[RMDB]
RNA sequence: GGGAACGACUCGAGUAGAGUCGAAAAGGUCGACUUCGCCAUGGAUGAAGGCACACCGGUCUACGCAGCACGGGGAGGCGUGACGGCCUACGUGAAGGAGGACUCCUCUGUGGGAGGCACCUCGGCCUGACGGGUUGAUGUUCGCAUCAACCCGUCAAAAAGAAACAACAACAACAAC
Reactivity to 2A3 in 0.01 (KOAc 150mM, MgCl2 10mM, bicine 150mM(pH8.5), 24C), signal-to-noise 1, nucleotides 027 to 126: g020g050u020c030g000a200c000u040u060c040g120c020c000a040u120g140g000a100u090g030a050a150g020g000c000a000c020a050c100c030g000g000u060c010u040a020c040g030c070a080g040c040a050c080g030g060g000g030a050g010g000c060g020u090g020a040c040g030g000c000c030u060a020c060g070u050g080a030a010g050g020a040g010g050a040c000u050c020c040u010c080u050g070u300g000g000g040a010g000g010c060a110c040c010u030c000g040g000c030c040
Reactivity to DMS in 0.01 (KOAc 150mM, MgCl2 10mM, bicine 150mM(pH8.5), 24C), signal-to-noise 1, nucleotides 027 to 126: g000g010u000c060g010a140c030u020u000c060g000c000c010a090u000g010g010a090u000g020a060a040g010g030c100a120c110a060c080c030g020g000u000c000u040a030c130g010c100a090g040c050a120c090g000g000g000g000a110g000g000c030g010u000g010a120c140g010g000c050c010u020a050c090g040u010g020a040a110g000g000a110g000g000a190c050u000c000c010u000c120u000g020u000g010g010g000a010g000g000c120a100c010c000u000c020g000g010c070c000
An RNA of 177 nucleotides, treated with 2A3 and DMS and read out base by base. Values cover nucleotides 27 to 126. Source: RMDB library OK2TST, as collected in RNAgym. The 2A3 profile rests on 1,022 reads. The DMS profile rests on 901 reads. For DMS the reverse transcriptase was MarathonRT.